About this RNA:
Source: RMDB libraries RFM100 and RFMREP, as collected in RNAgym. This 177-nucleotide RNA was probed chemically with 2A3 and DMS. Reactivities are given for positions 27 through 126. DMS adducts were read by reverse transcription with MarathonRT.
RNA sequence: GGGAACGACUCGAGUAGAGUCGAAAACUUAGUUGAGGGCAUCAGAAGAAGCCAUUGACUUGUCAGGCGUUUUUCUGAUCUCCAGAUUUCAUGUUGCGGACAGUUCCUGCUCGCACCAGGGCCGGUCUUGUUGCUAACUUUUCGAAGUUAGCAACAAAAAAGAAACAACAACAACAAC
Reactivity to 2A3 in 0.01 (KOAc 150mM, MgCl2 10mM, bicine 150mM(pH8.5), 24C), signal-to-noise 3, nucleotides 027 to 126: c040u080u050a020g060u070u070g040a210g000g000g000c040a010u000c000a000g020a000a000g000a000a000g000c010c040a120u080u080g010a030c060u120u260g080u070c080a040g020g070c160g170u000u000u000u010u000c000u010g000a000u000c000u000c000c000a040g020a220u110u100u040c150a120u100g050u100u090g050c050g010g010a000c010a050g020u040u090c010c020u000g000c030u000c030g090c020a060c030c040a040g000g000g000c000c020g040g010u030c000
Reactivity to DMS in 0.01 (KOAc 150mM, MgCl2 10mM, bicine 150mM(pH8.5), 24C), signal-to-noise 4, nucleotides 027 to 126: c070u020u020a080g000u010u000g000a120g000g000g010c300a010u000c010a030g000a030a000g010a010a090g010c010c000a120u030u010g020a040c040u020u030g020u000c030a070g000g010c020g000u000u000u000u000u000c010u000g000a010u000c010u000c000c010a180g010a100u020u020u010c130a120u000g010u010u000g010c040g000g000a030c050a060g000u010u020c030c010u000g020c050u000c130g010c130a080c210c010a040g010g010g000c050c030g000g000u010c070